Structure probing data (DMS and 2A3) for a 207-nucleotide construct. The reactions ran in a buffer of 150 mM KOAc, 10 mM MgCl2 and 150 mM bicine (pH 8.5), at 24 C. Values cover nucleotides 27 to 156. Source: RMDB library RNAMAK, as collected in RNAgym. For 2A3, 2,677 sequencing reads were counted.
[RMDB]
RNA sequence: GGGAACGACUCGAGUAGAGUCGAAAAUGGAGAUUCGUCUCCAAUGCAGAUAUGGAUCAUGAAGUCUCCCUGUAGCGUUGAAAGUUAAUCGGAAACGAUUAACUGGAGCUACCUGGAGUCACAUGAUCCUAAGUCAAAGGGGCAGGUUCGCCUGCAAUCCCGUUUACAAUUUCGAUUGUAAACGGGAAAAAGAAACAACAACAACAAC
Reactivity to DMS in 0.01 (KOAc 150mM, MgCl2 10mM, bicine 150mM(pH8.5), 24C), signal-to-noise 2, nucleotides 027 to 156: u010g000g000a070g030a070u000u010c210g010u000c000u000c000c020a030a080u000g020c080a160g030a180u010a300u010g000g010a050u000c000a010u010g000a050a170g040u000c000u000c000c000c010u000g030u000a020g030c000g000u010u000g000a130a150a030g010u000u010a000a010u020c000g020g000a160a100a300c000g040a020u000u000a010a020c010u000g010g000a140g000c000u000a000c000c020u000g030g030a030g040u010c020a300c010a010u010g020a010u000c000c000u030a000a050g010u000c050a040a150a170g000g000g030g020c000a100g000g030u000u000c220g000c000c000u000g010c040a050a300
Reactivity to 2A3 in 0.01 (KOAc 150mM, MgCl2 10mM, bicine 150mM(pH8.5), 24C), signal-to-noise 2, nucleotides 027 to 156: u080g010g010a010g000a010u090u110c180g050u020c080u000c010c000a020a050u150g010c080a040g030a030u120a020u220g010g000a000u000c010a000u000g060a140a060g030u030c000u000c000c000c010u000g000u000a000g000c020g130u230u020g030a030a010a010g000u000u000a000a000u000c010g000g020a050a030a040c020g000a020u000u000a000a000c000u000g010g020a000g000c000u000a000c000c000u010g010g010a010g000u030c000a000c000a030u000g010a000u020c010c000u000a000a000g000u000c010a020a020a160g090g000g070g010c020a040g010g050u090u140c170g060c040c020u010g010c010a000a030